[RMDB]
RNA sequence: GGGAACGACUCGAGUAGAGUCGAAAAUGAAAGCUGUGUGAGCGAGGCGGGCGGAGGAUGAGGCCGUGCCCGGGCUGUGGCUGCAGCCGCCCGGGGACACGCCGUGCACCCUCGGGCUCCGGAAAAACCUACGUUAAAUAUUCGUAUUUAACGUAGGAAAAGAAACAACAACAACAAC
Reactivity to 2A3 in 0.01 (KOAc 150mM, MgCl2 10mM, bicine 150mM(pH8.5), 24C), signal-to-noise 5, nucleotides 027 to 126: u190g030a080a050a040g030c040u030g030u040g040u100g200a030g030c050g010a050g040g080c060g020g000g010c030g030g020a020g020g000a020u060g030a050g030g010c120c040g010u020g030c000c010c010g010g010g010c050u090g030u090g150g000c070u150g040c070a030g010c000c010g010c000c000c000g000g000g000g000a030c010a000c010g020c010c010g000u050g010c010a030c020c000c000u000c000g010g130g000c020u020c020c020g040g020a060a090a010a010a020
Reactivity to DMS in 0.01 (KOAc 150mM, MgCl2 10mM, bicine 150mM(pH8.5), 24C), signal-to-noise 9, nucleotides 027 to 126: u010g010a090a080a120g010c020u000g020u000g020u000g000a070g010c050g010a100g010g010c060g010g000g020c030g000g010a030g000g010a050u010g010a150g000g010c060c080g020u000g000c010c000c010g010g000g010c020u000g010u000g010g010c030u010g010c150a160g010c010c100g010c010c000c000g000g000g000g010a050c010a030c100g010c020c020g010u010g010c040a050c030c010c010u000c020g010g020g010c020u000c010c020g000g000a050a050a040a100a100
An RNA of 177 nucleotides, treated with 2A3 and DMS and read out base by base. The data come from the RNA Mapping Database (RMDB), library M2PK90.